The data come from the RNA Mapping Database (RMDB), library OK2TRN. Structure probing data (DMS and 2A3) for a 177-nucleotide construct. The RNA was probed in 150 mM KOAc, 10 mM MgCl2 and 150 mM bicine (pH 8.5) at 24 C. The DMS profile rests on 1,700 reads. For DMS the reverse transcriptase was MarathonRT.
[RMDB]
RNA sequence: GGGAACGACUCGAGUAGAGUCGAAAACUUGAUUGAUGGAAAAGUCUGUUAGGAUGUUGGAACAAUCAGGAACUGCAAGGUUGGUUCAUGGAGGGCAACUGGACCUAUCAUUUUCUAUUAUGAGUAGCGGAAUAGAGUUGUUCGCAACUCUAUUCCGAAAAGAAACAACAACAACAAC
Reactivity to DMS in 0.01 (KOAc 150mM, MgCl2 10mM, bicine 150mM(pH8.5), 24C), signal-to-noise 2, nucleotides 027 to 126: c010u000u010g000a110u000u010g000a080u000g000g020a060a030a050a110g010u000c160u020g000u020u000a050g020g050a080u000g020u010u010g000g020a100a070c080a050a050u000c050a060g010g000a060a060c070u000g020c090a100a060g030g010u000u000g020g000u000u000c040a050u000g000g000a070g000g000g000c000a030a080c060u010g010g000a080c040c000u010a050u000c040a080u010u000u010u010c030u000a070u010u000a080u000g010a140g010u000a110g010
Reactivity to 2A3 in 0.01 (KOAc 150mM, MgCl2 10mM, bicine 150mM(pH8.5), 24C), signal-to-noise 1, nucleotides 027 to 126: c000u050u040g060a030u050u050g030a060u090g030g060a020a060a060a030g040u000c120u120g040u190u030a030g010g030a050u030g030u090u020g030g020a100a030c020a000a070u070c040a020g030g000a010a020c030u010g000c060a120a120g110g020u120u030g010g000u050u030c010a000u050g030g030a010g000g010g000c010a060a000c000u020g090g020a040c010c010u020a030u040c000a030u000u080u010u050c040u020a100u100u040a040u140g060a010g070u090a020g070